[RMDB]
RNA sequence: GGGAACGACUCGAGUAGAGUCGAAAACAAACACCAGCGAAAAGGAAGAAAAACCAAAACGUGAACUACUUGACGAAACACGAACGCUGGUGUAAAUCGUCAAGAAACAAAAACAAAACAAACAAAAGGGAUGCAUAUAUUUCGAUAUAUGCAUCCCAAAAGAAACAACAACAACAAC
Reactivity to 2A3 in 0.01 (KOAc 150mM, MgCl2 10mM, bicine 150mM(pH8.5), 24C), signal-to-noise 1, nucleotides 027 to 126: c000a010a070a010c040a000c000c000a000g040c070g050a030a080a000a000g050g030a080a050g070a200a080a040a000a000c080c100a060a000a000a130c060g010u000g030a030a000c040u120a000c010u100u010g000a000c000g000a070a070a070c000a000c110g000a110a000c020g000c000u000g000g000u000g040u030a000a040a000u010c000g000u010c000a000a000g020a100a130a000c100a070a040a100a000a000c030a010a070a030a020c100a070a110a040c070a030a050a000a000
Reactivity to DMS in 0.01 (KOAc 150mM, MgCl2 10mM, bicine 150mM(pH8.5), 24C), signal-to-noise 1, nucleotides 027 to 126: c000a150a220a020c000a000c000c000a090g000c000g000a140a090a080a140g000g040a000a040g060a090a080a080a140a080c040c000a020a110a000a150c060g000u000g000a140a110c100u110a000c000u000u030g000a060c000g010a040a070a100c000a000c000g000a100a200c000g010c060u000g000g080u000g030u020a000a000a100u000c060g040u000c000a000a000g000a170a030a040c300a080a070a040a030a180c160a030a090a120a000c180a160a070a050c040a000a120a280a010